[RMDB]
RNA sequence: GGGAACGACUCGAGUAGAGUCGAAAAGAAGAGAAUACGGUGUAAGAACAGCCCAACUUACACUGUGCGGCAUAACGGAAACAGUGAUGUCGAAAAUUGGGCUGUUCGUGAAUGAACGAAAGAAGAAGCUGCACGUAAAUUUCGAUUUACGUGCAGCAAAAGAAACAACAACAACAAC
Reactivity to DMS in 0.01 (KOAc 150mM, MgCl2 10mM, bicine 150mM(pH8.5), 24C), signal-to-noise 2, nucleotides 027 to 126: g070a080a060g010a240g000a100a070u020a070c010g000g000u000g000u000a040a080g000a010a130c000a040g000c000c000c000a140a110c080u000u030a020c000a010c030u020g020u020g000c020g030g010c040a020u010a060a070c000g000g020a110a070a130c200a100g020u000g000a000u000g100u000c020g020a040a000a070a120u000u010g030g000g010c000u000g000u000u000c000g010u000g010a020a240u050g020a120a000c000g060a060a090a010g080a080a100g000a050a090
Reactivity to 2A3 in 0.01 (KOAc 150mM, MgCl2 10mM, bicine 150mM(pH8.5), 24C), signal-to-noise 2, nucleotides 027 to 126: g160a040a010g060a000g030a110a040u170a060c020g000g020u000g000u000a010a000g010a070a020c000a020g000c000c000c000a010a050c020u040u010a010c040a000c010u000g000u040g010c000g000g050c040a040u010a060a040c050g070g080a270a180a000c050a040g000u030g070a050u010g010u000c020g000a000a070a000a070u110u050g030g000g000c030u000g030u000u000c000g030u030g010a050a140u220g030a100a020c050g000a050a030a100g060a070a000g050a020a000

Source: RMDB library OK1LIB, as collected in RNAgym. Structure probing data (DMS and 2A3) for a 177-nucleotide construct. The reactions ran in a buffer of 150 mM KOAc, 10 mM MgCl2 and 150 mM bicine (pH 8.5), at 24 C. Values cover nucleotides 27 to 126. The DMS profile rests on 1,788 reads.